[RMDB]
RNA sequence: GGGAACGACUCGAGUAGAGUCGAAAAUGAUGCGGUUCGGCAGGCGGUAAAACGCCAUCCGGAUUUUAUCGUCGGCCUCAAGGCGCGGAUGAGCAGCAGCGUGGUAGGCGUUAACGGCAUCACGCCGUCAUCACGUGCGUUUCGACGCACGUGAUGAAAAAGAAACAACAACAACAAC
Reactivity to 2A3 in 0.01 (KOAc 150mM, MgCl2 10mM, bicine 150mM(pH8.5), 24C), signal-to-noise 4, nucleotides 027 to 126: u060g030a010u030g010c030g050g020u000u070c020g000g030c060a040g010g000c020g010g000u030a010a030a000a040c160g020c020c050a060u070c050c060g000g010a030u020u060u010u050a060u050c010g010u000c030g020g030c020c010u100c110a080a100g060g000c100g000c040g100g020a070u090g020a030g060c060a020g020c020a010g040c020g060u050g040g090u100a080g000g100c030g030u070u030a060a030c010g040g010c000a020u070c020a070c090g020c000c010g030
Reactivity to DMS in 0.01 (KOAc 150mM, MgCl2 10mM, bicine 150mM(pH8.5), 24C), signal-to-noise 2, nucleotides 027 to 126: u000g000a120u010g010c120g010g010u000u050c080g010g000c050a060g000g010c000g000g020u020a050a010a050a080c150g000c010c050a070u000c130c150g000g060a160u000u000u000u000a030u010c000g020u020c000g000g000c050c010u020c180a080a070g010g000c030g000c010g010g000a090u010g040a130g000c100a060g040c070a080g010c040g000u010g010g040u030a130g000g000c060g010u000u010a090a050c100g010g000c000a050u030c090a150c160g000c020c000g000
An RNA of 177 nucleotides, treated with 2A3 and DMS and read out base by base. For 2A3, 2,793 sequencing reads were counted. Values cover nucleotides 27 to 126.